RNA sequence: GGGAACGACUCGAGUAGAGUCGAAAAUGGUAUCAUUGCAAGGUUCGAAACUUAAUAAAUACCCUAGCGCUUAAAGACACUCACCUCCCGCAUAAACAAGCCUCGGGUUAGUAUUUUUGGGGGUUUUACCGUUUCACUUAUUCGUAAGUGAAACGGUAAAAGAAACAACAACAACAAC
Reactivity to 2A3 in 0.01 (KOAc 150mM, MgCl2 10mM, bicine 150mM(pH8.5), 24C), signal-to-noise 1, nucleotides 027 to 126: u150g060g040u030a100u130c020a110u060u080g000c010a000a070g050g010u050u040c010g060a060a070a020c030u000u060a010a010u170a150a180a010u070a100c030c000c000u000a010g020c010g010c060u050u150a140a060a000g080a000c010a000c030u000c020a020c010c040u000c000c000c000g020c010a050u100a040a210a000c080a000a010g060c000c000u030c000g020g020g020u050u070a050g050u030a130u030u130u060u140u110g020g000g000g020g000u000u000u000u000
The record gives the reactivity of an RNA of 177 nucleotides to 2A3. 2A3 adducts were read by reverse transcription with SuperScript II with manganese.